[RMDB]
RNA sequence: GGGAACGACUCGAGUAGAGUCGAAAAAACUCAGCUACGGAGAGUAUAACAUUCAUGUUGACGAGACCUAGACGAAACACAGAGGAAAAUUAUUAAUCACUGGAUAGUAUUAGUAAUGACUCUGUGUAAAACUCUUCUACGUUCGCGUAGAAGAGAACUUUCAUCAAGUGUUCGCACUUGAUGAAAGAAAAGAAACAACAACAACAAC
Reactivity to 2A3 in 0.01 (KOAc 150mM, MgCl2 10mM, bicine 150mM(pH8.5), 24C), signal-to-noise 3, nucleotides 027 to 156: a000a000c000u010c010a010g000c000u030a010c110g020g020a020g000a040g050u070a110u070a250a000c040a020u080u150c030a090u130g020u060u060g030a060c050g020a020g030a090c000c000u010a010g040a060c020g030a040a050a000c000a000c010a010g020a010g000g030a160a120a060a020u020u000a000u000u010a020a000u030c050a010c040u070g030g150a230u300a300g010u020a010u020u000a010g010u000a030a020u020g020a030c000u010c000u000g000u000g000u000a000a000a000a000c000u000c000u000u000c000u000a010c000g010u010u050c220g000c000g070u000a000g000a000a000g000a000g000a010a010
Reactivity to DMS in 0.01 (KOAc 150mM, MgCl2 10mM, bicine 150mM(pH8.5), 24C), signal-to-noise 1, nucleotides 027 to 156: a090a030c030u000c020a040g030c110u000a050c090g010g020a050g000a190g020u000a110u000a130a070c080a120u000u000c030a000u010g020u000u020g050a100c050g000a150g000a120c010c040u000a130g010a120c010g000a120a150a080c000a020c010a050g030a020g000g000a100a040a070a020u030u030a010u000u010a000a040u010c070a100c030u000g040g020a130u010a070g030u000a070u000u000a010g030u000a010a000u000g000a170c020u000c000u000g020u000g060u000a030a020a100a040c010u000c000u000u020c000u000a000c030g020u010u020c300g020c010g030u000a010g040a020a020g030a020g000a000a020